[RMDB]
RNA sequence: GGGAACGACUCGAGUAGAGUCGAAAAGCACGUAGGUUCAGAUGAUGGGCCCGCAUCUGUACGAAAGCCAGACGAAAGUCCAGCCUACGUGCAUGAGCACGCGGGCCCCGUGCUCUACAGCAAAAGAAUAUCGUAUAAUCUUCGGAUUAUACGAUAUAAAAGAAACAACAACAACAAC
Reactivity to DMS in 0.01 (KOAc 150mM, MgCl2 10mM, bicine 150mM(pH8.5), 24C), signal-to-noise 9, nucleotides 027 to 126: g000c000a010c000g000u000a000g010g010u000u010c060a040g000a010u000g000a050u040g000g010g010c010c000c000g020c010a020u000c000u000g010u050a120c120g010a110a100a150g010c150c110a090g010a010c000g000a120a070a150g000u000c010c150a100g000c000c000u000a050c000g010u000g000c000a010u010g010a070g000c040a030c040g010c130g000g000g000c020c000c000c000g000u000g000c000u000c030u020a100c130a130g000c140a080a070a090a100g010a140
Reactivity to 2A3 in 0.01 (KOAc 150mM, MgCl2 10mM, bicine 150mM(pH8.5), 24C), signal-to-noise 9, nucleotides 027 to 126: g000c000a000c010g000u010a010g020g020u110u110c060a020g010a080u070g010a020u060g030g000g000c000c000c000g000c000a010u000c010u040g110u140a070c110g150a140a050a020g090c060c030a040g010a020c010g070a150a030a010g010u010c020c020a000g000c010c000u000a000c000g000u000g000c000a000u010g000a000g000c020a000c020g010c020g000g010g000c000c000c000c000g000u000g000c000u000c000u050a090c050a070g130c060a040a070a040a020g170a100